[RMDB]
Chemical mapping of a 177-nucleotide RNA with 2A3 and DMS. 2A3 adducts were read by reverse transcription with SuperScript II with manganese.

RNA sequence: GGGAACGACUCGAGUAGAGUCGAAAAUCCCCCAGUGUUGCCUGGGUCUGACUUUGCCUCAGUGAAAACUGCCUCGAAUUCUUUCUUGCACCGAUGGGCAGAUGGGCAGUGUCGGAGGAUCGUGUCACGUGCAUGUUUAUUUCGAUAAACAUGCACGAAAAGAAACAACAACAACAAC
Reactivity to 2A3 in 0.01 (KOAc 150mM, MgCl2 10mM, bicine 150mM(pH8.5), 24C), signal-to-noise 6, nucleotides 027 to 126: u000c000c000c000c000c000a010g010u040g070u150u080g050c020c010u030g010g010g000u010c030u010g010a010c000u060u080u130g020c010c010u130c030a110g040u090g200a050a050a030a050c010u010g020c010c010u080c060g060a130a140u180u040c070u070u160u020c040u100u130g020c050a110c140c060g130a180u200g030g010g000c010a000g000a050u060g000g000g000c000a000g010u020g020u040c010g020g000a050g000g040a050u070c060g020u010g040u070c030a010
Reactivity to DMS in 0.01 (KOAc 150mM, MgCl2 10mM, bicine 150mM(pH8.5), 24C), signal-to-noise 4, nucleotides 027 to 126: u040c020c010c000c030c030a010g010u020g000u010u010g000c180c010u000g000g010g020u000c090u000g000a030c010u000u010u010g010c010c000u000c080a070g020u010g020a070a070a090a130c000u000g000c030c000u010c200g020a090a100u010u000c090u000u010u010c060u010u010g010c100a080c050c080g000a110u040g010g010g010c030a010g000a050u010g000g010g000c000a030g010u000g010u000c030g000g020a050g010g000a090u010c080g020u010g000u010c060a170